Notes:
The record gives the reactivity of an RNA of 170 nucleotides to 2A3 and DMS. Reactivities are rounded to 0.1 and cut off at 0 and 3. For DMS the reverse transcriptase was MarathonRT. The DMS profile rests on 244,456 reads. Reactivities are given for positions 27 through 129. For 2A3 the reverse transcriptase was SuperScript II with manganese. Conditions: 150 mM KOAc, 10 mM MgCl2 and 150 mM bicine (pH 8.5), 24 C.
[RMDB]
RNA sequence: GGGAACGACUCGAGUAGAGUCGAAAAUCCUCCUCUUCCUCUCGGCUGAGGUGCUUCCCUCCCGCGGCCAGCUGCUUCUUCUUGUUCUCCAGGGCCUUCCUUCUUCUGUGGUCCCGCCUCUCCCGGUUAGUCACAUAGUUCGCUAUGUGAAAAAGAAACAACAACAACAAC
Reactivity to 2A3 in 0.01 (KOAc 150mM, MgCl2 10mM, bicine 150mM(pH8.5), 24C), signal-to-noise 9, nucleotides 027 to 129: u020c000c000u020c000c000u030c020u040u020c000c000u040c010u030c040g040g010c030u040g050a050g050g020u040g020c030u050u030c000c000c000u020c020c010c000g030c030g010g010c010c010a030g010c020u060g020c000u040u040c000u070u010c010u060u120g040u080u020c020u010c030c020a040g020g020g000c010c000u040u040c020c000u040u070c000u050u020c020u050g130u060g060g010u030c010c010c000g010c000c010u020c010u010c010c000c000g030g020u050u060a040g030
Reactivity to DMS in 0.01 (KOAc 150mM, MgCl2 10mM, bicine 150mM(pH8.5), 24C), signal-to-noise 9, nucleotides 027 to 129: u000c010c010u000c020c000u000c030u000u000c010c010u000c050u020c050g020g030c060u000g020a100g010g020u010g000c100u000u010c030c010c000u010c040c030c040g010c060g000g020c030c020a070g020c060u010g020c060u000u000c040u000u040c050u020u040g020u000u030c010u000c040c060a120g010g020g030c030c030u000u000c030c030u030u040c040u000u000c060u000g030u040g020g010u010c030c030c030g000c030c010u000c020u000c000c020c040g020g000u020u030a070g010